[RMDB]
RNA sequence: GGGAACGACUCGAGUAGAGUCGAAAACACAUUUUUGUUGAACUGGCAACCAACCCCAUACCAUAUUCCAAUUUUCUUGGCUCAAACCAAAGGUUACUUCAAGGAGCAAGGUCUAGACAUGGCCAUCCGGCUUAUUAUCUUUCGAGAUAAUAAGCCGAAAAGAAACAACAACAACAAC
Reactivity to DMS in 0.01 (KOAc 150mM, MgCl2 10mM, bicine 150mM(pH8.5), 24C), signal-to-noise 4, nucleotides 027 to 126: c080a070c180a080u000u000u010u000u000g010u010u000g020a110a080c080u010g000g000c040a060a080c070c050a070a110c080c030c010c030a070u000a060c060c040a040u000a080u000u000c030c040a080a070u000u010u010u000c030u010u000g000g010c050u010c080a060a100a100c070c070a060a050a070g000g020u000u000a050c070u020u000c100a060a080g010g010a070g000c130a080a040g020g010u000c020u000a090g020a100c140a080u000g010g010c010c020a100u000c130
Reactivity to 2A3 in 0.01 (KOAc 150mM, MgCl2 10mM, bicine 150mM(pH8.5), 24C), signal-to-noise 3, nucleotides 027 to 126: c070a000c010a060u060u080u080u130u160g080u020u030g030a060a040c020u040g020g030c010a020a070c020c010a020a040c020c060c000c000a020u050a050c010c010a020u030a080u110u060c030c030a060a100u060u060u060u010c020u030u040g030g000c010u030c130a100a050a030c020c010a020a110a080g040g000u060u020a070c010u090u070c040a060a050g070g000a030g040c020a050a060g040g010u000c000u030a030g030a030c040a080u090g010g020c000c010a020u080c080
About this RNA:
This 177-nucleotide RNA was probed chemically with DMS and 2A3. For DMS the reverse transcriptase was MarathonRT.